Structure probing data (DMS and 2A3) for a 177-nucleotide construct. The reactions ran in a buffer of 150 mM KOAc, 10 mM MgCl2 and 150 mM bicine (pH 8.5), at 24 C. DMS adducts were read by reverse transcription with MarathonRT. It was measured as part of the RMDB library TTRDEL. 2A3 adducts were read by reverse transcription with SuperScript II with manganese.
RNA sequence: GGGAACGACUCGAGUAGAGUCGAAAAGAUAUGGAGGUGAUGUACAGCAACAGCUCGGAAACGAGACAUGCUGAACAUACCUCCUAAGUCAAACAUUCGUCGCUAUGUUCGCAUAGCGACGAAUGAACUCGUUAAGGUAGUUCGCUACCUUAACGAGAAAAGAAACAACAACAACAAC
Reactivity to DMS in 0.01 (KOAc 150mM, MgCl2 10mM, bicine 150mM(pH8.5), 24C), signal-to-noise 4, nucleotides 027 to 126: g010a050u000a300u000g020g020a010g000g020u000g020a010u000g010u000a130c000a000g010c000a010a080c240a160g000c000u000c000g010g000a080a090a220c010g000a010g000a050c110a170u010g010c000u000g000a060a010c000a010u000a020c000c010u000c000c000u020a000a040g000u010c040a130a110a230c010a020u010u000c000g010u010c000g010c000u000a000u000g010u010u020c250g010c000a000u000a000g000c020g010a000c000g010a000a000u000g020a040a100
Reactivity to 2A3 in 0.01 (KOAc 150mM, MgCl2 10mM, bicine 150mM(pH8.5), 24C), signal-to-noise 3, nucleotides 027 to 126: g020a020u080a040u160g010g010a020g000g040u180g240a130u030g010u030a080c010a010g000c000a020a090c020a230g030c010u000c000g030g000a070a070a080c000g000a010g040a020c020a070u080g000c000u000g000a010a000c000a000u010a010c000c000u000c000c000u000a010a000g000u020c030a060a050a060c010a000u000u010c000g000u000c000g000c000u020a010u020g020u030u080c110g000c210a000u000a020g000c010g010a000c000g000a000a000u000g000a000a000